Conditions: 150 mM KOAc, 10 mM MgCl2 and 150 mM bicine (pH 8.5), 24 C.
This 177-nucleotide RNA was probed chemically with 2A3 and DMS.
Reactivities are rounded to 0.1 and cut off at 0 and 3.
For 2A3, 1,271 sequencing reads were counted.

RNA sequence: GGGAACGACUCGAGUAGAGUCGAAAAGACGCGUGAGUAUGUGGCGAUUGCUCGCGAUUGGCGAUCGGCGACAAGGCUGCGUGACCGGCUAGGCUACGCGUUUGGGCCGCCGGGGUGGCAACCGUCGCACGUGCUCAGGGUUCGCCCUGAGCACGUGAAAAGAAACAACAACAACAAC
Reactivity to 2A3 in 0.01 (KOAc 150mM, MgCl2 10mM, bicine 150mM(pH8.5), 24C), signal-to-noise 3, nucleotides 027 to 126: g070a000c000g030c070g040u010g020a050g030u020a030u110g030u040g050g040c000g000a070u000u070g000c040u020c070g070c010g290a300u020u080g060g030c030g030a060u020c010g100g000c000g000a000c000a060a090g020g010c010u020g030c100g100u130g070a030c000c000g040g030c080u130a140g040g030c030u220a090c120g020c040g140u100u230u200g040g080g000c030c000g000c000c000g000g000g020g040u110g010g040c000a000a000c000c000g010u030c020g050
Reactivity to DMS in 0.01 (KOAc 150mM, MgCl2 10mM, bicine 150mM(pH8.5), 24C), signal-to-noise 1, nucleotides 027 to 126: g040a050c050g000c000g000u010g000a040g010u020a000u000g030u000g020g000c020g010a090u020u000g010c000u010c030g010c010g040a120u000u000g060g020c030g020a090u000c010g000g000c000g010a060c040a160a110g030g020c010u010g000c020g000u000g000a160c000c010g000g010c030u000a130g020g050c000u000a100c040g010c170g000u030u040u010g030g000g000c010c000g020c020c000g000g000g010g050u020g010g000c130a020a090c000c050g010u000c080g010